About this RNA
Chemical mapping of a 177-nucleotide RNA with 2A3 and DMS. 2A3 adducts were read by reverse transcription with SuperScript II with manganese. The data come from the RNA Mapping Database (RMDB), library RFMREP. The RNA was probed in 150 mM KOAc, 10 mM MgCl2 and 150 mM bicine (pH 8.5) at 24 C.
RNA sequence: GGGAACGACUCGAGUAGAGUCGAAAACCCGAGCCGUCCAAUGCUGUAACCCAAUACAGGUCCACUGAUAAGGUGGGUGGCGGCAAAUAACGCCAUACGAUGAGUAGGGGCGUUAUGUUGAAUACCGCAUUGUUACAACGUUCGCGUUGUAACAAUGAAAAGAAACAACAACAACAAC
Reactivity to 2A3 in 0.01 (KOAc 150mM, MgCl2 10mM, bicine 150mM(pH8.5), 24C), signal-to-noise 3, nucleotides 027 to 126: c000c000c010g010a010g000c000c000g020u000c010c010a100a100u190g000c000u000g010u020a040a040c010c020c010a030a030u020a020c000a000g000g010u000c000c020a010c010u040g040a180u210a300a060g000g010u000g000g010g000u010g000g000c000g000g000c000a000a000a010u000a000a000c000g000c010c000a000u000a000c000g030a040u250g040a040g020u000a010g060g030g010g020c000g000u000u000a010u030g010u010u220g100a120a060u100a130c050c040g020
Reactivity to DMS in 0.01 (KOAc 150mM, MgCl2 10mM, bicine 150mM(pH8.5), 24C), signal-to-noise 5, nucleotides 027 to 126: c000c000c000g000a010g010c000c000g020u000c000c010a100a040u000g000c010u000g000u000a020a040c300c100c300a200a160u000a010c020a000g000g000u000c000c000a010c000u000g000a150u010a080a120g000g020u000g000g000g020u000g010g010c000g000g000c000a010a030a020u000a000a010c000g010c000c000a010u000a000c010g000a150u020g000a300g000u000a000g000g000g000g010c000g020u000u000a000u000g000u010u010g000a120a110u010a150c240c240g000